[RMDB]
RNA sequence: GGGAACGACUCGAGUAGAGUCGAAAAAUGCCGCAUUCAGUGACGGUAACUCUAGUGGGCUACUGUCUAUCUAGCGUUGACAUCUACAUACUAUAUAGUAAUACCAAUACUCAAGACUACGAAACGGAUCAUGGAUAUGGUUCGCCAUAUCCAUGAUAAAAGAAACAACAACAACAAC
Reactivity to 2A3 in 0.01 (KOAc 150mM, MgCl2 10mM, bicine 150mM(pH8.5), 24C), signal-to-noise 9, nucleotides 027 to 126: a000u120g020c020c000g010c030a040u120u130c090a030g080u020g080a070c020g000g010u020a030a030c010u000c010u050a050g060u160g050g010g000c020u070a050c050u130g010u020c000u010a070u020c020u020a020g010c010g050u020u060g040a040c010a070u040c030u080a050c020a100u110a070c040u050a060u070a060u070a240g050u060a060a050u040a140c020c020a070a070u050a070c020u050c080a040a080g030a080c050u080a040c120g100a120a100a010c060g070g010
Reactivity to DMS in 0.01 (KOAc 150mM, MgCl2 10mM, bicine 150mM(pH8.5), 24C), signal-to-noise 5, nucleotides 027 to 126: a070u020g010c040c000g000c040a090u020u010c130a110g010u010g000a070c030g000g010u010a030a050c010u000c010u010a110g020u040g000g010g030c030u000a040c070u000g010u010c010u020a040u030c040u010a050g000c060g000u000u010g000a100c050a040u000c050u010a060c090a080u020a100c090u000a120u010a090u050a030g000u000a040a040u020a100c040c050a040a080u020a050c050u000c060a050a060g010a080c050u020a040c060g020a070a070a060c140g000g000